RNA sequence: GGGAACGACUCGAGUAGAGUCGAAAAUAAUUGCGCUCAGGGCACGACCGGUUCGCUCGGGUAUUGAGAGAGUCAGUGAAAGGUAGCGAGCGAUUUUAUUGUCGUAGGUAUUCUUCUGGCUUGCGGGAGCCGUAUGAUGAUUCGUCAUCAUACGGCUAAAAGAAACAACAACAACAAC
Reactivity to DMS in 0.01 (KOAc 150mM, MgCl2 10mM, bicine 150mM(pH8.5), 24C), signal-to-noise 2, nucleotides 027 to 126: u010a080a090u010u000g010c060g010c050u000c080a060g030g000g030c050a080c050g000a080c030c070g000g000u000u000c070g010c040u000c030g010g000g000u010a060u020u000g010a110g000a120g000a060g000u000c030a020g010u000g000a050a080a110g000g010u000a050g000c030g000a150g010c010g000a030u000u000u010u010a100u030u000g010u000c020g010u000a120g010g010u000a050u000u000c020u010u000c050u010g010g000c030u000u000g000c080g000g010g020
Reactivity to 2A3 in 0.01 (KOAc 150mM, MgCl2 10mM, bicine 150mM(pH8.5), 24C), signal-to-noise 2, nucleotides 027 to 126: u080a000a060u090u110g050c060g000c020u030c040a060g040g040g000c030a000c060g020a080c010c000g040g000u030u010c020g000c050u000c000g040g000g070u130a100u130u200g010a030g000a000g000a000g050u040c000a000g010u060g160a080a120a010g060g000u040a050g070c030g020a040g040c020g000a040u070u090u070u080a210u110u170g030u000c030g030u040a040g010g140u010a050u110u030c030u020u040c010u040g030g020c000u000u070g000c000g020g020g000

Structure probing data (DMS and 2A3) for a 177-nucleotide construct. For 2A3, 1,592 sequencing reads were counted. Conditions: 150 mM KOAc, 10 mM MgCl2 and 150 mM bicine (pH 8.5), 24 C. The data come from the RNA Mapping Database (RMDB), library OK2TST.